[RMDB]
This 207-nucleotide RNA was probed chemically with DMS and 2A3. The RNA was probed in 150 mM KOAc, 10 mM MgCl2 and 150 mM bicine (pH 8.5) at 24 C. For 2A3, 10,312 sequencing reads were counted. DMS adducts were read by reverse transcription with MarathonRT. For DMS, 4,557 sequencing reads were counted. The data come from the RNA Mapping Database (RMDB), library RNAMAK. For 2A3 the reverse transcriptase was SuperScript II with manganese.

RNA sequence: GGGAACGACUCGAGUAGAGUCGAAAACGCUGGGUGUGCGGCUUGAAAGUAGAACUACACUUCCUGAAGCGCGCACGGGAAGUGCUACUUUGGCCAAGCACACCUGUGCUGAAGCGCGCACGGCAACCGAAAGGUGCGAUGUGACAGUUCGCUGUCAGCUCCCUAAAAUUUUCGAAUUUUAGGGAGCAAAAGAAACAACAACAACAAC
Reactivity to DMS in 0.01 (KOAc 150mM, MgCl2 10mM, bicine 150mM(pH8.5), 24C), signal-to-noise 2, nucleotides 027 to 156: c040g040c020u000g020g020g020u000g010u010g080c000g010g010c010u000u000g010a070a030a050g010u000a030g000a090a110c040u010a300c000a020c000u000u000c000c010u000g010a020a060g050c020g030c040g030c000a300c000g020g000g010a040a020g040u010g000c000u000a010c030u000u000u000g010g030c040c010a090a220g040c010a010c000a040c000c010u000g010u000g000c020u000g000a040a060g010c000g020c080g050c000a300c010g000g020c020a040a060c010c000g030a150a140a190g010g030u000g010c000g000a120u000g020u010g000a180c020a080g000u000u000c160g000c020u000g010u000c010a110
Reactivity to 2A3 in 0.01 (KOAc 150mM, MgCl2 10mM, bicine 150mM(pH8.5), 24C), signal-to-noise 7, nucleotides 027 to 156: c020g000c010u020g000g000g000u000g000u000g000c010g000g020c040u120u300g190a000a010a010g000u030a010g000a060a010c100u220a030c300a000c000u010u000c010c010u030g030a200a080g010c000g000c000g000c000a000c010g000g000g000a010a010g010u010g010c000u010a000c000u010u140u300g000g000c010c030a040a030g000c000a000c000a000c000c000u010g000u000g000c000u030g010a110a030g000c010g000c000g000c010a020c000g000g000c010a010a010c010c000g050a090a040a030g030g010u000g000c020g030a090u150g060u060g100a000c000a010g000u050u130c160g070c130u010g010u030c010a020